[RMDB]
RNA sequence: GGGAACGACUCGAGUAGAGUCGAAAAACGGUGCGGAAGUUCGCGCUUCCGUGAAACGCGAAAAUCGGACGGUGGCUGCAAGUCGCAUCGCAAAACCGCGGCAAGUGGAGUUACCGAGAGGAGGCUGAAACCAUCCAACACUUCGGUGUUGGAUGAACUUAUGGUGCGUAUUCGUACGCACCAUAAGAAAAGAAACAACAACAACAAC
Reactivity to 2A3 in 0.01 (KOAc 150mM, MgCl2 10mM, bicine 150mM(pH8.5), 24C), signal-to-noise 3, nucleotides 027 to 156: a000c040g040g020u050g000c020g000g050a030a010g040u100u120c070g000c030g000c080u020u000c000c000g000u030g010a070a060a010c070g020c030g090a060a080a000a080u070c030g050g050a020c040g000g020u010g000g000c020u090g040c050a060a020g000u000c020g010c010a060u100c070g010c090a110a160a020a000c070c040g000c000g020g000c030a120a120g030u040g050g040a030g020u040u040a020c000c040g020a020g010a010g070g020a010g000g040c070u060g020a040a010a000c020c010a000u000c000c000a000a000c010a000c000u020u090c210g070g000u000g000u000u000g000g000a000u000g000a000a000
Reactivity to DMS in 0.01 (KOAc 150mM, MgCl2 10mM, bicine 150mM(pH8.5), 24C), signal-to-noise 2, nucleotides 027 to 156: a020c000g010g020u000g010c000g030g010a070a080g050u010u000c200g060c230g030c010u020u000c000c090g080u000g020a080a080a040c010g010c000g020a040a050a090a120u000c030g040g000a140c050g000g000u000g020g010c000u000g020c030a110a140g010u000c040g020c010a070u000c040g000c110a040a080a100a190c090c240g000c030g000g020c050a100a120g030u000g020g000a130g030u000u000a120c060c030g010a060g000a090g010g000a050g020g000c040u000g020a070a180a090c110c020a010u000c010c010a020a010c010a020c000u000u000c300g030g010u020g020u000u000g010g000a000u010g000a020a040
Annotation:
Chemical mapping of a 207-nucleotide RNA with 2A3 and DMS. Conditions: 150 mM KOAc, 10 mM MgCl2 and 150 mM bicine (pH 8.5), 24 C. For 2A3, 2,365 sequencing reads were counted. For DMS the reverse transcriptase was MarathonRT. For DMS, 2,860 sequencing reads were counted.